[RMDB]
RNA sequence: GGGAACGACUCGAGUAGAGUCGAAAAGCCGAAAUGCCUGGUUAACUGGCGUGUCGUGGUUGACCCGCGGGCCUGCGGCUACAGUGCAUGCUGUGAUCGGCAGUGGGAGAGGUAGCGGUGCGGCGUAGCUUCGGACGUUAUUCGUAACGUCCGAAGCAAAAGAAACAACAACAACAAC
Reactivity to 2A3 in 0.01 (KOAc 150mM, MgCl2 10mM, bicine 150mM(pH8.5), 24C), signal-to-noise 2, nucleotides 027 to 126: g040c010c000g020a080a040a000u120g000c000c020u090g000g070u170u130a190a100c050u060g040g000c000g030u040g010u000c000g010u060g060g050u080u090g090a120c000c000c000g000c100g080g110g000c020c050u070g020c040g050g020c000u000a020c010a000g080u020g150c050a040u120g000c020u050g020u080g050a210u060c040g030g030c000a010g010u030g030g020g020a160g000a020g040g050u040a020g000c060g010g030u040g000c030g000g000c040g030u050a030
Reactivity to DMS in 0.01 (KOAc 150mM, MgCl2 10mM, bicine 150mM(pH8.5), 24C), signal-to-noise 2, nucleotides 027 to 126: g020c020c000g000a070a140a080u020g040c020c010u000g010g010u000u010a080a110c050u000g020g010c010g030u000g020u000c040g020u020g010g000u000u000g000a130c070c010c150g050c090g010g000g010c080c030u000g020c050g010g010c070u000a040c030a040g020u000g010c110a060u010g000c020u010g020u010g010a110u000c080g010g010c050a050g020u000g000g000g000a130g010a110g010g000u000a060g020c060g010g020u010g000c080g000g010c070g010u000a090